[RMDB]
RNA sequence: GGGAACGACUCGAGUAGAGUCGAAAAGUGGUCAACGGAAACGCAGUCACCAUCUCUUCCACCCGUGACCCCACCCAGAUCGACUGGCAGGCUGCCGGUGUGGACUACGUCUGCGAGUCCACUGGUGGGUGAACAAAAGAUUCGUCUUUUGUUCACCAAAAGAAACAACAACAACAAC
Reactivity to DMS in 0.01 (KOAc 150mM, MgCl2 10mM, bicine 150mM(pH8.5), 24C), signal-to-noise 9, nucleotides 027 to 126: g030u010g010g010u010c040a100a060c050g010g010a100a090a150c110g010c040a040g010u000c040a090c060c050a060u000c060u000c060u000u000c040c040a130c140c010c020g010u000g000a110c050c010c030c040a120c050c010c030a100g010a120u010c180g000a060c020u000g000g010c020a070g010g010c110u010g010c020c010g000g010u010g010u000g010g000a030c020u010a040c100g010u000c090u000g020c060g010a030g010u000c000c040a020c010u000g010g020u010g010
Reactivity to 2A3 in 0.01 (KOAc 150mM, MgCl2 10mM, bicine 150mM(pH8.5), 24C), signal-to-noise 8, nucleotides 027 to 126: g110u100g010g000u030c050a110a040c050g020g060a150a060a010c070g010c060a010g030u030c010a020c090c020a170u060c060u020c000u130u030c030c020a060c030c020c000g020u020g040a030c010c000c010c020a060c010c010c000a020g040a200u130c080g060a040c020u010g040g000c010a050g130g060c050u090g020c000c020g020g060u110g030u090g020g010a010c030u070a050c100g070u060c040u050g050c070g040a010g000u010c010c000a010c020u030g040g030u090g110

An RNA of 177 nucleotides, treated with DMS and 2A3 and read out base by base.
Conditions: 150 mM KOAc, 10 mM MgCl2 and 150 mM bicine (pH 8.5), 24 C.